The record gives the reactivity of an RNA of 177 nucleotides to 2A3 and DMS. DMS (dimethyl sulfate) methylates the pairing face of unpaired adenines and cytosines. For 2A3, 1,501 sequencing reads were counted. Reactivities are given for positions 27 through 126. The DMS profile rests on 1,773 reads.

RNA sequence: GGGAACGACUCGAGUAGAGUCGAAAAUCAUUGAAGUGACGAUUCAAACGGGUGUUAACGUAACUUUCGAAAGGGUGAAUCAAACAGUGACCUCGGUGUGGUCAAGGAUAUCGAGUUCCGUGAGCAAGGUGAGCAUUUAUUUCGAUAAAUGCUCACCAAAAGAAACAACAACAACAAC
Reactivity to 2A3 in 0.01 (KOAc 150mM, MgCl2 10mM, bicine 150mM(pH8.5), 24C), signal-to-noise 2, nucleotides 027 to 126: u070c040a030u000u150g070a100a010g050u010g020a020c070g030a030u030u030c050a020a070a050c030g050g030g000u070g010u090u040a040a030c020g050u020a000a070c030u010u130u110c120g030a140a060a010g050g020g030u090g060a020a070u030c000a050a040a040c040a020g080u020g060a020c010c000u010c000g080g010u060g000u030g030g060u020c020a000a010g080g000a030u060a010u130c000g000a000g020u000u060c000c010g030u060g020a060g050c100a120a070
Reactivity to DMS in 0.01 (KOAc 150mM, MgCl2 10mM, bicine 150mM(pH8.5), 24C), signal-to-noise 3, nucleotides 027 to 126: u000c040a080u000u000g030a090a070g020u030g010a100c060g020a130u000u010c080a020a100a130c110g000g000g040u010g010u010u010a050a070c090g020u000a070a030c100u000u000u000c100g040a100a090a060g000g000g050u000g000a050a070u000c100a070a060a070c110a070g000u010g000a030c180c030u000c100g010g030u010g050u000g010g000u000c090a010a080g010g000a090u010a070u000c040g000a060g000u010u000c060c000g010u000g010a150g010c150a060a110